[RMDB]
This 207-nucleotide RNA was probed chemically with 2A3 and DMS. The RNA was probed in 150 mM KOAc, 10 mM MgCl2 and 150 mM bicine (pH 8.5) at 24 C. Values are in units of 0.01, from 0 to 300, in steps of 10. For 2A3 the reverse transcriptase was SuperScript II with manganese.
RNA sequence: GGGAACGACUCGAGUAGAGUCGAAAAUCUAUAGCUAGGAGGAGCUGGAGCUGAGAUUCAACCCCAGGUUCUCUGGUGCCCAAGUGCUCAUGUCUUUGCCCUGUGUGCCCCUCUUUCACAGAAACAGAGCUUCAGCCAAAUCCUGGAACGGAAGCUCGAUACAUAUCUGAUUCGUCAGAUAUGUAUCAAAAGAAACAACAACAACAAC
Reactivity to 2A3 in 0.01 (KOAc 150mM, MgCl2 10mM, bicine 150mM(pH8.5), 24C), signal-to-noise 4, nucleotides 027 to 156: u030c010u010a110u090a120g040c030u030a020g010g070a000g010g020a050g040c010u000g000g020a020g010c040u060g050a050g030a220u190u130c070a060a050c000c010c000c010a040g030g130u110u020c030u000c020u060g040g020u070g010c020c010c030a080a060g050u060g050c010u020c070a050u120g050u040c060u050u110u110g000c000c030c000u030g010u000g050u090g100c030c010c020c010u030c010u010u120u090c070a070c010a050g080a100a160a030c020a030g010a010g010c010u000u010c000a020g000c000c020a040a060a050u100c030c040u020g020g020a080a050c050g060g010a020a010g000c000u000c050
Reactivity to DMS in 0.01 (KOAc 150mM, MgCl2 10mM, bicine 150mM(pH8.5), 24C), signal-to-noise 3, nucleotides 027 to 156: u000c050u000a140u010a100g040c020u010a210g030g020a100g030g010a050g020c000u000g020g000a020g010c020u000g000a130g010a280u010u010c050a050a090c030c010c020c010a040g010g020u000u010c030u010c020u000g000g010u000g010c010c020c040a090a120g010u000g010c020u000c070a080u000g030u000c030u010u000u000g020c020c020c020u010g010u000g030u000g000c000c020c030c030u020c030u000u000u010c040a130c070a110g010a190a080a100c060a180g000a030g020c000u000u000c000a040g030c030c020a030a080a180u010c060c050u000g000g000a300a060c020g020g000a040a030g010c030u010c010